[RMDB]
RNA sequence: GGGAACGACUCGAGUAGAGUCGAAAAGUUUAUAAUAACUGGCAAAUCAAACAAUAAUUUCGCAGUAGCUGCCUAAUCGCACUCUGCAUCGCCUAACAGCAUUUCCUAUAUGCUGUUAACGCGAUUCAACCUUAAUAGGAUAUGCUAAACACUGCCGGACUAAUAAGUUGUUCGCAACUUAUUAGUCAAAAGAAACAACAACAACAAC
Reactivity to DMS in 0.01 (KOAc 150mM, MgCl2 10mM, bicine 150mM(pH8.5), 24C), signal-to-noise 3, nucleotides 027 to 156: g020u000u010u000a100u010a130a110u000a070a050c060u000g020g040c020a070a090a110u000c050a110a150a070c060a070a110u010a100a130u000u000u010c090g020c020a030g020u010a040g040c080u000g050c010c010u010a080a120u000c100g010c000a060c040u000c010u000g040c020a170u000c000g020c010c100u000a010a020c010a040g020c000a030u000u000u000c190c120u000a110u010a060u010g010c000u000g010u000u000a010a030c070g010c010g010a040u000u000c080a100a110c040c060u010u000a100a140u000a090g000g000a100u000a070u010g010c030u010a110a070a100c070a110c090u000g020c000c010g000
Reactivity to 2A3 in 0.01 (KOAc 150mM, MgCl2 10mM, bicine 150mM(pH8.5), 24C), signal-to-noise 9, nucleotides 027 to 156: g010u020u100u070a200u070a170a120u150a080a050c040u040g040g010c030a050a050a100u120c070a130a110a150c060a070a140u200a160a110u100u220u230c070g000c010a020g030u210a010g030c140u020g000c010c020u070a090a060u120c040g000c020a010c020u040c020u010g000c010a000u000c000g000c000c000u000a000a000c000a000g000c000a000u040u030u120c020c040u080a060u000a000u140g000c000u000g000u000u000a020a010c020g000c000g030a000u080u070c030a030a120c020c020u110u190a090a040u040a110g000g020a030u030a050u150g020c020u060a080a090a030c050a020c070u050g010c030c030g050
An RNA of 207 nucleotides, treated with DMS and 2A3 and read out base by base. The RNA was probed in 150 mM KOAc, 10 mM MgCl2 and 150 mM bicine (pH 8.5) at 24 C. DMS adducts were read by reverse transcription with MarathonRT. It was measured as part of the RMDB library ARCHII.